Chemical mapping of a 177-nucleotide RNA with DMS and 2A3. DMS adducts were read by reverse transcription with MarathonRT. The 2A3 profile rests on 1,256 reads. For 2A3 the reverse transcriptase was SuperScript II with manganese. The RNA was probed in 150 mM KOAc, 10 mM MgCl2 and 150 mM bicine (pH 8.5) at 24 C.
[RMDB]
RNA sequence: GGGAACGACUCGAGUAGAGUCGAAAAUUUCUGCAUCAUCUGAGUAACCUCAUGAACACGCACUUGGUUAUCUUGAUUUAAACGAACCAACUGAAGCACCUUAUCGCGUACUGCCUCGGUCUGGGCAACAUUCGUGAGUGUUCGCACUCACGAAUGUAAAAGAAACAACAACAACAAC
Reactivity to DMS in 0.01 (KOAc 150mM, MgCl2 10mM, bicine 150mM(pH8.5), 24C), signal-to-noise 2, nucleotides 027 to 126: u000u000u000c030u000g010c110a080u010c090a020u010c010u000g020a130g000u010a090a080c060c050u000c110a060u000g000a100a050c090a070c180g000c040a070c090u000u000g000g010u000u010a040u010c040u020u000g020a090u000u010u000a040a050a120c180g020a070a060c040c030a060a050c070u000g000a030a050g010c050a050c070c060u030u000a100u000c080g000c060g010u000a080c170u000g000c050c020u000c050g000g020u000c060u010g000g000g000c060a100
Reactivity to 2A3 in 0.01 (KOAc 150mM, MgCl2 10mM, bicine 150mM(pH8.5), 24C), signal-to-noise 2, nucleotides 027 to 126: u020u000u050c030u120g040c020a010u030c000a010u070c080u080g020a020g090u070a060a100c030c000u040c050a120u120g100a130a040c050a000c090g100c030a030c050u030u040g040g000u030u120a060u130c010u040u140g140a150u070u120u260a090a160a040c050g010a020a020c020c000a080a000c040u070g030a060a000g000c010a010c010c040u070u140a100u150c030g010c020g050u030a090c020u030g000c020c000u030c040g110g030u070c070u080g000g010g000c010a010